Notes
Conditions: 150 mM KOAc, 10 mM MgCl2 and 150 mM bicine (pH 8.5), 24 C. An RNA of 177 nucleotides, treated with DMS and 2A3 and read out base by base. The DMS profile rests on 4,698 reads. For 2A3, 777 sequencing reads were counted.
RNA sequence: GGGAACGACUCGAGUAGAGUCGAAAAUGGCUGAGCAGUGGAACUUGUCUAGGAUGGUAUCGACAAUGCAACAUUAUUCCUUAUAGCAAAGAUGUUGACCUAGGAAUUUUUAUACAAGAUUACAAAAUAAAUUAGUAUGGUUCGCCAUACUAAUUUAAAAAGAAACAACAACAACAAC
Reactivity to DMS in 0.01 (KOAc 150mM, MgCl2 10mM, bicine 150mM(pH8.5), 24C), signal-to-noise 5, nucleotides 027 to 126: u000g000g000c040u000g000a090g020c050a040g000u000g010g000a080a070c070u000u000g010u000c040u000a070g010g010a100u010g010g000u000a090u000c080g020a070c100a050a090u000g000c050a030a050c050a040u000u000a130u010u000c020c020u000u010a110u010a090g010c070a080a060a200g010a060u000g010u000u000g000a080c080c060u000a080g000g010a060a010u000u010u010u000u020a090u020a180c030a050a100g000a150u010u010a060c020a060a040a060a120
Reactivity to 2A3 in 0.01 (KOAc 150mM, MgCl2 10mM, bicine 150mM(pH8.5), 24C), signal-to-noise 1, nucleotides 027 to 126: u060g030g050c040u030g020a030g060c030a040g030u060g030g050a020a060c000u020u030g000u040c000u010a040g000g010a010u060g080g040u020a050u050c000g020a020c040a000a030u060g040c040a040a040c020a090u000u050a050u080u000c130c000u130u060a120u160a070g070c010a160a020a040g020a090u020g000u040u020g000a020c010c010u010a010g000g050a070a060u130u120u140u060u140a160u050a060c000a030a000g040a090u040u140a020c030a000a260a050a140

High DMS reactivity at an A or C suggests that its Watson-Crick edge is free.